Structure probing data (DMS and 2A3) for a 177-nucleotide construct. For DMS the reverse transcriptase was MarathonRT. Values cover nucleotides 27 to 126. The reactions ran in a buffer of 150 mM KOAc, 10 mM MgCl2 and 150 mM bicine (pH 8.5), at 24 C.
RNA sequence: GGGAACGACUCGAGUAGAGUCGAAAAGUACACCCUCCCUCCCUCCCAAAAGCGCGCAAAUAAAGGGAGGGACUCAGGGAUGAGUAGGCCAAAAGGCCAUAUGCCGAAGACGCGCGACGGGACAAAAACUAUUAGAACUGUUCGCAGUUCUAAUAGUAAAAGAAACAACAACAACAAC
Reactivity to DMS in 0.01 (KOAc 150mM, MgCl2 10mM, bicine 150mM(pH8.5), 24C), signal-to-noise 4, nucleotides 027 to 126: g000u000a140c180a150c010c000c010u000c010c000c010u000c000c000c000u000c000c020c010a070a090a100a160g000c020g010c010g010c030a100a060a200u000a050a090a140g000g000g000a030g000g000g000a010c020u010c170a020g010g010g000a090u000g020a060g010u010a100g000g010c010c010a020a100a120a160g000g010c000c010a050u010a030u020g010c020c040g010a100a080g000a100c080g010c020g010c020g020a070c090g010g000g000a120c110a060a070a070a090
Reactivity to 2A3 in 0.01 (KOAc 150mM, MgCl2 10mM, bicine 150mM(pH8.5), 24C), signal-to-noise 4, nucleotides 027 to 126: g030u070a040c030a090c100c000c010u000c010c010c000u010c010c010c000u010c000c000c020a060a110a010a020g010c030g000c020g000c010a040a070a080u180a110a120a020g000g000g000a000g000g000g000a000c000u040c030a000g010g030g000a000u060g010a020g080u230a090g010g000c030c010a090a300a160a210g020g010c020c000a050u090a030u150g030c020c000g040a040a020g070a030c040g000c000g000c000g010a030c020g010g040g000a010c020a030a110a020a030

Annotation: 2A3 adducts were read by reverse transcription with SuperScript II with manganese.